[RMDB]
RNA sequence: GGGAACGACUCGAGUAGAGUCGAAAACGGCGGCGGCGGUAAUGCUGUUGAACACAUGGUGCGCGAGCGCAUUGAAGGUGUUGAAUUCUUCGCGGUAAAUACCGAUGCACAAGCGCUGCGUAAAACACAGCUGUAAGAUGUUCGCAUCUUACAGCUGAAAAGAAACAACAACAACAAC
Reactivity to 2A3 in 0.01 (KOAc 150mM, MgCl2 10mM, bicine 150mM(pH8.5), 24C), signal-to-noise 2, nucleotides 027 to 126: c030g020g000c000g030g000c000g020g010c030g000g090u070a050a030u100g000c020u020g010u080u080g090a100a010c010a000c000a050u100g050g050u080g020c010g020c040g090a050g030c020g060c020a030u030u130g100a100a020g050g000u040g060u050u090g060a090a110u180u050c030u080u110c100g030c060g090g000u070a200a170a010u080a050c000c000g050a080u100g000c070a050c030a140a010g060c000g000c000u020g020c000g000u040a080a060a010a000c170a010
Reactivity to DMS in 0.01 (KOAc 150mM, MgCl2 10mM, bicine 150mM(pH8.5), 24C), signal-to-noise 3, nucleotides 027 to 126: c070g040g030c040g040g020c070g010g000c010g020g020u000a050a100u000g010c030u000g020u010u000g010a060a110c080a050c090a060u000g010g010u000g000c000g020c030g000a150g040c040g020c000a050u000u000g000a090a100g000g010u000g000u010u000g030a110a080u000u020c090u000u000c100g020c070g020g010u000a050a030a070u000a050c010c000g010a090u010g000c080a080c160a110a210g010c020g010c010u000g010c030g010u000a060a040a080a100c220a100

Chemical mapping of a 177-nucleotide RNA with 2A3 and DMS.
2A3 adducts were read by reverse transcription with SuperScript II with manganese.
The RNA was probed in 150 mM KOAc, 10 mM MgCl2 and 150 mM bicine (pH 8.5) at 24 C.
Values are in units of 0.01, from 0 to 300, in steps of 10.
For 2A3, 1,768 sequencing reads were counted.